[RMDB]
RNA sequence: GGGAACGACUCGAGUAGAGUCGAAAAUCUGCAGUCAAAAUGCUAGGGCAUCUCACAGGGUAGGUGCAUUGAUAACAUUAUUCUCUCUUCCCUCAGCAGGCAUGCAAAAUCAUAUUAGAUUGGCAGAUAGGCACACCUCUUUCGAGAGGUGUGCCUAAAAAGAAACAACAACAACAAC
Reactivity to 2A3 in 0.01 (KOAc 150mM, MgCl2 10mM, bicine 150mM(pH8.5), 24C), signal-to-noise 1, nucleotides 027 to 126: u040c000u000g000c010a000g080u030c000a110a000a000a000u090g000c170u120a140g060g060g060c000a000u000c000u000c000a160c040a110g030g010g050u100a070g070g000u070g030c100a140u050u090g200a270u120a050a080c000a000u000u120a100u300u000c050u000c000u000c000u010u180c000c000c000u160c000a090g000c000a000g020g140c040a000u070g000c000a010a000a000a210u180c070a000u000a070u090u300a070g070a070u000u000g000g000c000a000g090a120